An RNA of 177 nucleotides, treated with DMS and 2A3 and read out base by base.
It was measured as part of the RMDB library OK1LIB.
As a SHAPE reagent, 2A3 marks flexible, mostly unpaired nucleotides at the ribose 2'-OH.
DMS adducts were read by reverse transcription with MarathonRT.
RNA sequence: GGGAACGACUCGAGUAGAGUCGAAAAGAGGACGGACGCAGAGGCUGUAUCCGGUCUGCAAACACGACAGGGCUGGAAUGUCACCUGGAGUGUACUGGCUGUCUCCGGAGUAGGACGUCCGAAGAGAGGGUUCCUUCUCGUUCGCGAGGAGGAACCCAAAAGAAACAACAACAACAAC
Reactivity to DMS in 0.01 (KOAc 150mM, MgCl2 10mM, bicine 150mM(pH8.5), 24C), signal-to-noise 2, nucleotides 027 to 126: g000a160g000g030a090c020g000g000a050c000g000c080a120g000a140g000g010c050u040g030u000a130u000c020c000g000g000u030c130u010g010c030a070a080a020c020a000c000g000a140c000a000g020g000g000c040u000g000g040a120a120u030g010u030c080a140c000c000u010g000g000a190g000u000g000u010a070c300u000g000g020c030u020g010u030c100u010c010c000g000g000a030g000u060a080g010g010a120c000g020u000c020c000g040a090a040g000a200g000a200
Reactivity to 2A3 in 0.01 (KOAc 150mM, MgCl2 10mM, bicine 150mM(pH8.5), 24C), signal-to-noise 3, nucleotides 027 to 126: g160a010g020g080a010c010g000g000a010c020g030c120a000g060a080g240g040c020u030g040u150a120u010c000c000g000g010u000c030u010g000c020a100a040a010c000a000c000g030a030c000a010g020g000g060c020u050g050g150a130a220u210g120u180c060a030c060c000u000g000g000a010g000u000g000u000a040c050u040g070g000c020u020g010u170c020u000c090c000g000g050a070g000u110a060g010g030a040c010g000u000c020c020g010a050a000g050a000g010a080

The 2A3 profile rests on 1,687 reads. The reactions ran in a buffer of 150 mM KOAc, 10 mM MgCl2 and 150 mM bicine (pH 8.5), at 24 C.